[RMDB]
RNA sequence: GGGAACGACUCGAGUAGAGUCGAAAAACUGCGAUCAGACGGUCGGCAGCGGCGAAAAUCUCCUCGGUCAAUUGCGUACGCGAGCGAAUGCCGAUGAUAUGCGCAGAAGAAAUCGCCUUGAUCAGAAGACUAAUGACUCAUUCGUGAGUCAUUAGUCAAAAGAAACAACAACAACAAC
Reactivity to 2A3 in 0.01 (KOAc 150mM, MgCl2 10mM, bicine 150mM(pH8.5), 24C), signal-to-noise 3, nucleotides 027 to 126: a010c020u020g000c030g030a070u080c010a000g110a150c050g050g020u010c000g050g000c010a020g040c020g060g000c060g070a060a020a030a090u060c060u030c040c000u010c040g030g000u050c020a010a110u230u140g040c010g040u130a080c060g030c050g140a050g010c050g070a150a070u120g000c000c030g020a000u020g040a010u020a040u160g060c010g000c030a000g050a070a020g040a030a070a020u080c040g060c020c070u090u120g050a120u100c020a020g090a180a000
Reactivity to DMS in 0.01 (KOAc 150mM, MgCl2 10mM, bicine 150mM(pH8.5), 24C), signal-to-noise 4, nucleotides 027 to 126: a090c020u000g000c040g020a050u010c040a070g000a080c210g010g010u000c030g010g020c060a090g000c090g010g010c050g000a080a070a130a080u010c060u010c020c040u000c040g020g010u010c060a110a100u000u010g020c060g000u010a050c090g000c020g020a070g000c120g010a090a080u000g000c000c000g000a080u000g010a080u000a100u010g000c020g000c040a020g020a100a080g000a070a070a080u000c090g000c020c060u010u000g010a040u000c030a120g000a160a130
Source: RMDB library OK2TST, as collected in RNAgym. Chemical mapping of a 177-nucleotide RNA with 2A3 and DMS. For 2A3, 2,673 sequencing reads were counted. DMS adducts were read by reverse transcription with MarathonRT. The reactions ran in a buffer of 150 mM KOAc, 10 mM MgCl2 and 150 mM bicine (pH 8.5), at 24 C. The DMS profile rests on 4,162 reads.